[RMDB]
The data come from the RNA Mapping Database (RMDB), libraries RFM100 and RFMREP. An RNA of 177 nucleotides, treated with DMS and 2A3 and read out base by base.
RNA sequence: GGGAACGACUCGAGUAGAGUCGAAAAAUAUUACAUUAAUCCAUAUAAGAAAAUCUCUUUUAAUGAGGAGUGAUGUAGUUACAAACUCUCCAGAGCCAUAAUUAGAGCAAACUAAUUGAAGUUGUGUGCUUAAUAAGGUAUUCGUACCUUAUUAAGCAAAAGAAACAACAACAACAAC
Reactivity to DMS in 0.01 (KOAc 150mM, MgCl2 10mM, bicine 150mM(pH8.5), 24C), signal-to-noise 2, nucleotides 027 to 126: a110u000a010u070u000a000c000a000u000u010a100a020u010c010c010a080u000a120u030a040a040g010a010a080a130a100u020c070u000c010u030u000u000u010a170a240u000g000a080g010g000a060g030u000g000a010u000g000u000a000g000u010u030a070c150a180a060a090c080u000c020u000c010c080a080g020a080g020c020c050a040u010a050a020u000u000a050g010a060g000c170a030a040a070c050u010a040a040u000u010g000a050a160g030u010u000g000u040g050u000
Reactivity to 2A3 in 0.01 (KOAc 150mM, MgCl2 10mM, bicine 150mM(pH8.5), 24C), signal-to-noise 4, nucleotides 027 to 126: a000u090a020u060u020a010c000a020u020u050a070a020u010c010c000a030u050a010u050a150a040g050a050a210a110a170u070c080u020c000u050u070u040u130a130a100u150g040a070g060g010a010g010u030g000a010u000g010u040a010g060u030u040a070c070a060a130a070c040u020c000u000c020c030a030g010a030g060c010c000a070u080a150a030u090u040a020g000a020g080c080a120a030a050c010u060a010a090u050u050g050a090a010g000u010u040g010u010g010u020
For DMS the reverse transcriptase was MarathonRT.